[RMDB]
RNA sequence: GGGAACGACUCGAGUAGAGUCGAAAACACCGGCGAGCCGGUUCUCCGGCUGACCGGACUGUCAGCGGCAACACUCCCGCACAUGGAUUAUGAGGUGGCAGGCACACCGGCACAGCGCAAGGUGUGGCCGCCUCCCCACGUUCGCGUGGGGAGGCGGAAAAGAAACAACAACAACAAC
Reactivity to 2A3 in 0.01 (KOAc 150mM, MgCl2 10mM, bicine 150mM(pH8.5), 24C), signal-to-noise 1, nucleotides 027 to 126: c010a010c000c000g000g000c080g020a000g010c000c020g060g080u190u020c120u060c030c000g010g000c000u000g070a100c020c000g030g010a010c070u040g010u000c020a010g070c000g080g000c020a090a000c010a080c050u070c020c040c010g100c020a070c040a060u180g080g070a050u020u120a120u300g050a010g020g100u030g030g010c070a050g130g000c000a010c010a000c040c000g000g020c060a060c080a110g100c020g060c100a090a130g000g000u000g000u000g030g030
Reactivity to DMS in 0.01 (KOAc 150mM, MgCl2 10mM, bicine 150mM(pH8.5), 24C), signal-to-noise 2, nucleotides 027 to 126: c130a160c030c000g000g000c050g000a010g010c000c000g010g000u000u010c300u000c010c020g000g010c010u010g000a070c010c030g000g000a090c160u000g000u000c060a100g000c090g010g020c110a060a070c110a100c130u000c040c010c000g040c060a060c110a080u000g000g010a050u020u020a130u020g010a100g010g000u010g000g020c030a090g000g000c030a010c010a010c010c000g000g010c000a180c260a150g000c150g010c020a050a060g030g010u000g020u000g000g020